An RNA of 177 nucleotides, treated with DMS and 2A3 and read out base by base. It was measured as part of the RMDB library TTRDEL. For DMS the reverse transcriptase was MarathonRT. The reactions ran in a buffer of 150 mM KOAc, 10 mM MgCl2 and 150 mM bicine (pH 8.5), at 24 C. For 2A3 the reverse transcriptase was SuperScript II with manganese.
RNA sequence: GGGAACGACUCGAGUAGAGUCGAAAAGAUAUGGAGUGGCUAGACAUGUCGUCUCGGAAACGAGGUCGACAACAGCUAGCACUCCUAAGUCAAAAGGUGUAUCAAAACUUCGGUUUUGAUACACCAACUACCAAGCCUUGUUCGCAAGGCUUGGUAGAAAAGAAACAACAACAACAAC
Reactivity to DMS in 0.01 (KOAc 150mM, MgCl2 10mM, bicine 150mM(pH8.5), 24C), signal-to-noise 2, nucleotides 027 to 126: g030a020u000a290u000g000g010a020g020u000g000g030c000u000a000g000a060c050a300u000g020u000c000g020u000c000u000c000g030g000a050a060a150c000g000a020g010g000u000c000g000a010c000a050a040c260a160g020c000u000a030g000c000a010c000u000c000c010u000a010a070g010u010c040a100a100a140a150g010g010u000g000u000a010u000c000a000a010a000a000c000u000u030c220g000g010u000u000u000u000g000a000u000a010c000a000c000c000a010a020
Reactivity to 2A3 in 0.01 (KOAc 150mM, MgCl2 10mM, bicine 150mM(pH8.5), 24C), signal-to-noise 2, nucleotides 027 to 126: g040a030u050a050u120g000g000a040g000u060g210g300c010u020a020g020a140c060a170u100g000u010c000g040u010c000u000c000g010g000a010a040a010c000g000a010g020g160u290c050g010a000c000a050a020c000a020g050c000u000a000g000c000a000c010u000c000c000u000a040a010g010u000c040a000a030a010a220g000g010u020g000u000a000u000c000a000a000a000a050c020u070u150c300g040g000u010u000u000u000g000a000u000a010c010a000c000c000a000a000